[RMDB]
Source: RMDB library M2RFPK, as collected in RNAgym. The record gives the reactivity of an RNA of 207 nucleotides to DMS and 2A3. 2A3 adducts were read by reverse transcription with SuperScript II with manganese. For DMS, 2,510 sequencing reads were counted. Conditions: 150 mM KOAc, 10 mM MgCl2 and 150 mM bicine (pH 8.5), 24 C. For 2A3, 1,142 sequencing reads were counted. Reactivities are rounded to 0.1 and cut off at 0 and 3.
RNA sequence: GGGAACGACUCGAGUAGAGUCGAAAACGUGCCUUCAUGGUAAGGGUUUGAUAUCUGCUAAAACCCGGUGCAUUCAUCAAUGCAGGUUAAGCCAAAGGGAUGUCCCGACCGGAGGCCGACAAUCCAGAUAGCUCAAGAAUGUUCGCAUUCUUGAGAAUCAGGUACGAAUGUUCGCAUUCGUACCUGAAAAAGAAACAACAACAACAAC
Reactivity to DMS in 0.01 (KOAc 150mM, MgCl2 10mM, bicine 150mM(pH8.5), 24C), signal-to-noise 2, nucleotides 027 to 156: c030g000u010g000c000c010u000u000c040a140u020g040g000u000a050a100g010g020g040u000u010u000g030a140u010a070u010c050u000g000c040u000a100a030a000a040c000c020c060g030g100u010g020c010a060u020u000c050a020u000c080a120a170u000g020c000a040g010g000u010u000a100a120g000c010c010a040a250a300g020g020g010a120u010g000u000c050c030c050g000a230c020c000g000g020a300g030g010c000c010g000a080c060a060a180u020c040c020a240g000a180u010a110g000c000u000c000a060a030g010a020a000u000g020u000u000c290g000c020a010u000u000c000u030u000g030a000g010a000a070
Reactivity to 2A3 in 0.01 (KOAc 150mM, MgCl2 10mM, bicine 150mM(pH8.5), 24C), signal-to-noise 3, nucleotides 027 to 156: c010g070u140g010c000c010u070u050c070a130u200g010g000u090a120a300g030g000g000u050u070u050g040a040u050a050u120c060u120g050c110u140a130a040a060a050c000c040c020g030g040u040g030c000a080u010u140c020a070u050c080a140a070u100g010c020a000g090g040u070u040a050a010g000c020c020a080a050a040g030g000g020a020u100g030u060c000c000c000g000a010c000c010g000g000a000g010g020c000c000g000a020c020a040a100u030c030c000a020g040a220u160a050g040c000u000c000a000a000g000a000a000u000g010u030u040c080g020c160a000u000u000c000u020u000g000a000g000a000a020